Chemical mapping of a 177-nucleotide RNA with DMS and 2A3. The DMS profile rests on 11,115 reads.
[RMDB]
RNA sequence: GGGAACGACUCGAGUAGAGUCGAAAAUAUCGAAGUCGGCGCUAUUGAAUACCCGUGUAUGGCGUUGCUGACAGGGACGUGCACUGCCAUGUCGGGCGGUGUAUCAAGCCCUAGCGUGGGCUAGAAAAGUCUCAGGUGGAUUCGUCCAUCUGGGGCUAAAAGAAACAACAACAACAAC
Reactivity to DMS in 0.01 (KOAc 150mM, MgCl2 10mM, bicine 150mM(pH8.5), 24C), signal-to-noise 2, nucleotides 027 to 126: u020a040u010c040g020a110a070g020u010c000g020g000c020g000c020u000a050u000u000g020a130a090u030a110c020c020c010g000u030g020u010a050u000g000g010c120g020u020u010g000c020u000g000a070c060a110g000g010g000a230c300g000u000g000c000a010c000u000g000c000c000a300u070g000u130c300g000g000g000c000g000g000u000g010u000a000u030c050a050a110g000c010c010c020u000a040g010c060g030u020g000g000g000c010u000a070g010a050a050a080
Reactivity to 2A3 in 0.01 (KOAc 150mM, MgCl2 10mM, bicine 150mM(pH8.5), 24C), signal-to-noise 4, nucleotides 027 to 126: u250a030u060c050g060a050a000g040u030c020g040g000c000g000c010u020a030u090u150g070a080a040u090a150c020c010c000g030u050g030u060a100u080g020g000c040g030u030u090g030c030u040g030a030c020a020g000g010g000a010c000g000u000g000c000a000c000u000g000c000c000a190u300g260u300c000g000g000g000c000g000g000u000g000u000a020u050c010a020a040g020c010c010c000u010a010g010c000g040u140g020g020g010c010u020a030g080a060a160a010

Conditions: 150 mM KOAc, 10 mM MgCl2 and 150 mM bicine (pH 8.5), 24 C.
Values cover nucleotides 27 to 126.